[RMDB]
RNA sequence: GGGAACGACUCGAGUAGAGUCGAAAAGUAUCACCAUCAUAUCUCAUUAUUCUUUGCUAAAUGUGAUAAUAAUGUGAUCCGCUAACAUAAAAAAAGUUUGACUUCACAAAAGCAGCUGGAAAUGGACUCGGGUAGCAACUUUCGAGUUGCUACCCGAAAAAGAAACAACAACAACAAC
Reactivity to 2A3 in 0.01 (KOAc 150mM, MgCl2 10mM, bicine 150mM(pH8.5), 24C), signal-to-noise 1, nucleotides 027 to 126: g050u080a000u060c000a040c140c060a110u090c080a000u140a070u140c000u000c030a000u000u040a160u140u050c220u040u230u000g030c030u240a140a140a000u180g000u000g000a000u000a070a110u000a000a000u070g010u000g010a050u110c070c000g010c090u120a140a000c000a090u200a060a100a000a010a000a000a000g090u180u110u040g000a010c040u010u000c120a070c050a280a080a000a000g000c000a000g000c000u140g040g070a070a160a090u090g010g040a070c000
The record gives the reactivity of an RNA of 177 nucleotides to 2A3.
For 2A3, 373 sequencing reads were counted.
For 2A3 the reverse transcriptase was SuperScript II with manganese.
Reactivities are given for positions 27 through 126.
The RNA was probed in 150 mM KOAc, 10 mM MgCl2 and 150 mM bicine (pH 8.5) at 24 C.
It was measured as part of the RMDB library RFM100.